[RMDB]
RNA sequence: GGGAACGACUCGAGUAGAGUCGAAAAAGUAGAAGGCGAGGAUGAUGAUUGGCAGUUGGGUACAGGUGCAGGUUUCUACAUCAAUGCUGAGACCGACAAAUGGAAGAAGCAUUACAAUAUGUAUGAUUUGAUUGUCAAGGAAUUGCCAGAGGUGCUGCGUAGUGUAGACGUUCGCGUCUACACUACGAAAAGAAACAACAACAACAAC
Reactivity to DMS in 0.01 (KOAc 150mM, MgCl2 10mM, bicine 150mM(pH8.5), 24C), signal-to-noise 2, nucleotides 027 to 156: a110g050u020a100g030a120a080g010g020c020g020a090g020g000a080u010g000a150u000g000a130u000u000g020g000c080a130g040u000u000g040g000g040u000a080c090a110g000g040u000g010c030a060g000g000u020u010u000c030u010a060c000a140u000c110a080a110u010g030c030u000g020a290g030a130c020c010g000a170c090a050a070a100u030g000g020a050a060g020a170a060g030c040a040u000u000a080c080a080a100u000a100u000g010u000a030u000g010a100u000u020u010g000a090u000u000g030u000c000a030a060g000g010a070a050u000u000g010c020c110a060g010a120g020g010u000g030c000u010g000
Reactivity to 2A3 in 0.01 (KOAc 150mM, MgCl2 10mM, bicine 150mM(pH8.5), 24C), signal-to-noise 4, nucleotides 027 to 156: a000g070u100a010g000a120a010g040g000c040g030a010g040g000a030u060g000a010u040g020a070u040u050g030g010c020a030g030u070u090g020g040g000u090a050c030a060g000g030u040g010c010a010g000g020u020u030u040c020u040a040c020a050u100c070a100a070u060g030c010u010g040a030g040a070c000c020g040a050c090a060a070a080u110g020g010a040a050g030a020a000g020c010a000u030u050a020c030a040a050u080a030u250g080u080a070u100g080a120u080u060u060g080a070u060u070g080u060c020a020a030g030g010a040a040u050u050g060c060c010a010g000a000g050g050u100g010c050u030g000
This 207-nucleotide RNA was probed chemically with DMS and 2A3.
DMS (dimethyl sulfate) methylates the pairing face of unpaired adenines and cytosines.
Reactivities are given for positions 27 through 156.
The DMS profile rests on 3,633 reads.
The 2A3 profile rests on 2,293 reads.